An RNA of 177 nucleotides, treated with DMS and 2A3 and read out base by base. It was measured as part of the RMDB library OK1LIB. DMS adducts were read by reverse transcription with MarathonRT.

[RMDB]
RNA sequence: GGGAACGACUCGAGUAGAGUCGAAAAAACCAUUGGUAGGAAAGGAAGUGCACUCAUUAUAGCCCCACCUGGUGCUCCUGGUGCUGCAACCAUUGCUAUACCUAACAUUGCAAUAUAAGGGAAUAAUGCACGAUACGAUAUUCGUAUCGUAUCGUGCAAAAGAAACAACAACAACAAC
Reactivity to DMS in 0.01 (KOAc 150mM, MgCl2 10mM, bicine 150mM(pH8.5), 24C), signal-to-noise 1, nucleotides 027 to 126: a090a040c080c000a090u020u070g000g000u010a000g030g000a050a050a020g000g000a030a070g040u010g000c060a070c050u000c040a100u020u030a070u090a070g030c080c000c000c000a050c050c030u010g000g040u030g010c000u000c160c030u000g000g000u000g020c000u020g000c130a000a110c080c010a060u000u050g070c020u050a080u000a090c050c040u030a030a060c140a090u000u000g000c140a090a040u060a130u040a030a010g050g000g000a100a060u000a020a180u000
Reactivity to 2A3 in 0.01 (KOAc 150mM, MgCl2 10mM, bicine 150mM(pH8.5), 24C), signal-to-noise 3, nucleotides 027 to 126: a000a020c080c000a120u120u010g060g030u150a050g020g080a040a050a000g050g030a150a050g010u060g060c050a030c090u170c030a080u140u160a120u170a120g030c000c000c000c000a090c000c060u110g040g000u030g000c000u050c050c000u040g030g010u020g030c110u070g030c030a050a010c030c000a020u020u010g000c020u130a040u080a140c000c000u040a050a030c020a100u090u170g050c030a110a020u050a040u050a170a100g030g010g070a050a070u180a210a050u140
Notes:
For 2A3, 1,310 sequencing reads were counted.